[RMDB]
Structure probing data (2A3 and DMS) for a 170-nucleotide construct. The reactions ran in a buffer of 150 mM KOAc, 10 mM MgCl2 and 150 mM bicine (pH 8.5), at 24 C. The DMS profile rests on 19,355 reads. For DMS the reverse transcriptase was MarathonRT. For 2A3, 4,236 sequencing reads were counted.
RNA sequence: GGGAACGACUCGAGUAGAGUCGAAAAGACGGUGGUUGUCUUAAUGCUUCUGAAGUGGUUGUUAAUAAUUUAGACAAGAGUGCUGGCCAUCCUUUUAAUAAGUUUGGCAAAGCUCGUGUCUAUUAUGGGAUCUAGUACUUCGGUACUAGAAAAAGAAACAACAACAACAAC
Reactivity to 2A3 in 0.01 (KOAc 150mM, MgCl2 10mM, bicine 150mM(pH8.5), 24C), signal-to-noise 4, nucleotides 027 to 129: g070a000c000g080g010u080g050g060u040u050g010u050c030u050u130a090a040u140g010c050u030u030c030u110g000a090a020g010u060g010g020u080u060g040u070u040a060a020u100a050a050u050u080u040a020g020a000c000a080a030g000a040g000u010g020c090u040g130g000c000c000a000u010c000c000u020u080u020u030a150a160u300a060a000g000u000u000u000g010g100c030a030a120a150g020c000u060c020g020u040g000u000c000u000a000u030u060a050u070g120g040g020a040
Reactivity to DMS in 0.01 (KOAc 150mM, MgCl2 10mM, bicine 150mM(pH8.5), 24C), signal-to-noise 4, nucleotides 027 to 129: g030a090c100g000g030u020g020g030u000u000g010u020c060u030u030a080a110u050g030c060u020u010c040u030g010a080a150g000u030g000g040u000u000g040u080u010a110a080u020a090a060u020u090u000a030g030a020c030a000a000g020a040g000u010g020c210u020g000g000c000c040a030u020c060c010u020u020u030u050a130a100u080a080a000g040u000u010u000g010g050c010a030a060a300g010c000u030c040g010u000g000u010c000u000a020u000u000a000u040g010g030g020a210